The record gives the reactivity of an RNA of 177 nucleotides to 2A3 and DMS. The data come from the RNA Mapping Database (RMDB), library OK2TST. DMS adducts were read by reverse transcription with MarathonRT. For DMS, 793 sequencing reads were counted. The RNA was probed in 150 mM KOAc, 10 mM MgCl2 and 150 mM bicine (pH 8.5) at 24 C. Reactivities are given for positions 27 through 126.
[RMDB]
RNA sequence: GGGAACGACUCGAGUAGAGUCGAAAAACAAUAUGACGAUCUCCGUGCUUGAUCGCUUUUCGCUACGAGGCCUCAUCGAUAAAGACGCGGAACUCGUGGCGAUCCAGCGUGAGAUUUUGAGACUCAACGUGAUCGAGUGCUUCGGCACUCGAUCACGAAAAGAAACAACAACAACAAC
Reactivity to 2A3 in 0.01 (KOAc 150mM, MgCl2 10mM, bicine 150mM(pH8.5), 24C), signal-to-noise 1, nucleotides 027 to 126: a000c070a030a110u250a090u190g080a060c030g050a080u000c010u010c050c070g090u070g130c030u040u140g050a030u000c000g000c000u050u100u080u050c020g010c020u010a000c000g010a000g010g050c020c010u000c000a060u010c030g020a080u130a300a210a020g000a000c000g010c000g030g000a150a230c000u000c000g010u000g000g020c000g000a000u010c000c000a000g030c000g000u050g000a010g000a020u100u050u070u130g040a030g020a010c050u000c040a020a020
Reactivity to DMS in 0.01 (KOAc 150mM, MgCl2 10mM, bicine 150mM(pH8.5), 24C), signal-to-noise 1, nucleotides 027 to 126: a140c080a050a120u020a120u010g000a050c040g000a080u010c030u010c030c170g010u000g010c150u000u000g010a060u030c050g000c020u000u010u000u000c030g000c000u000a000c040g000a010g000g000c000c010u000c000a040u000c000g020a180u020a100a170a090g000a030c020g000c100g000g000a120a110c070u000c030g020u000g040g000c020g010a000u000c050c160a000g000c030g000u000g000a150g000a050u000u000u030u010g000a130g010a080c050u000c020a130a210